Structure probing data (DMS and 2A3) for a 177-nucleotide construct.
Reactivities are given for positions 27 through 126.
The 2A3 profile rests on 9,550 reads.
For DMS, 7,598 sequencing reads were counted.

RNA sequence: GGGAACGACUCGAGUAGAGUCGAAAAAGUAGCUCGGCGACUUCGCGUUCGCGAUCGGAUAGCGGCGAGCCCGCCGGUGGCUGGCGCGGUGCCGGCGGGGUACCGGAAGCUGGUUCCGUGUCGCCGGGGAGCUAUUCUAUUUCGAUAGAAUAGCUCCAAAAGAAACAACAACAACAAC
Reactivity to DMS in 0.01 (KOAc 150mM, MgCl2 10mM, bicine 150mM(pH8.5), 24C), signal-to-noise 3, nucleotides 027 to 126: a130g010u010a060g010c020u000c000g010g000c020g000a010c010u030u030c020g020c010g030u020u050c140g030c010g010a060u120c030g000g010a050u030a060g000c000g020g000c110g010a060g000c010c010c000g020c010c010g010g020u000g000g040c060u010g000g010c130g030c020g000g000u010g010c000c000g010g020c000g010g000g000g000u060a040c110c070g020g010a160a200g000c020u010g000g010u020u000c010c000g000u050g000u000c000g000c000c000g000g000
Reactivity to 2A3 in 0.01 (KOAc 150mM, MgCl2 10mM, bicine 150mM(pH8.5), 24C), signal-to-noise 7, nucleotides 027 to 126: a000g190u120a030g020c030u010c040g000g010c000g010a010c010u060u050c030g020c020g170u300u290c190g010c000g030a050u110c020g000g020a040u050a080g040c010g070g020c020g020a040g050c000c000c000g000c000c000g010g020u030g060g020c020u050g120g150c130g020c110g090g030u020g010c000c000g000g000c030g000g010g000g000u060a060c020c000g030g020a060a020g010c030u040g040g200u080u010c000c000g030u050g010u030c000g000c010c000g000g000